[RMDB]
RNA sequence: GGGAACGACUCGAGUAGAGUCGAAAAGGACAAGCAAUAGCAAAAAAAGAUGUUGAUAAUAGAGCAAUUCCUGGACAAGACGAAUUAUUUGUUGAAGUUGGUACAAGUGGUAAAACAGUUCCAAAAUCUUCUGGUUAUCAAAAUUUAGUUAGUGCUCCACAACUCUUAAAUUCGUUUAAGAGUUGUGAAAAGAAACAACAACAACAAC
Reactivity to 2A3 in 0.01 (KOAc 150mM, MgCl2 10mM, bicine 150mM(pH8.5), 24C), signal-to-noise 3, nucleotides 027 to 156: g020g010a000c010a000a000g000c010a010a020u020a020g000c010a020a090a050a050a000a010a140g050a110u110g010u110u050g020a040u040a170a060u090a060g040a020g000c030a010a050u090u050c000c010u010g000g000a010c020a060a020g050a020c040g010a030a020u140u070a070u120u270u110g050u020u020g040a100a080g060u050u020g010g010u010a000c000a020a010g000u040g080g010u070a060a080a070a010c030a020g020u110u050c030c000a100a100a060a100u010c000u040u000c000u030g050g020u060u100a020u070c020a030a080a060a080u110u120u030a030g000u000u050a050g030u040g040c090u100c050
Reactivity to DMS in 0.01 (KOAc 150mM, MgCl2 10mM, bicine 150mM(pH8.5), 24C), signal-to-noise 2, nucleotides 027 to 156: g010g020a060c020a050a060g000c070a040a030u000a030g010c010a000a000a050a070a090a100a070g000a070u010g010u000u000g020a070u010a080a140u010a150g000a090g030c030a110a140u010u000c020c010u010g010g010a070c050a070a180g000a100c010g020a100a070u010u010a140u000u000u000g020u000u000g020a060a160g020u000u000g030g010u000a000c020a010a040g030u010g010g010u000a030a040a060a070c050a090g020u010u020c040c040a030a080a140a100u000c020u000u000c030u000g020g010u000u000a030u010c010a010a020a030a050u000u010u010a080g010u010u010a100g030u000g030c070u000c010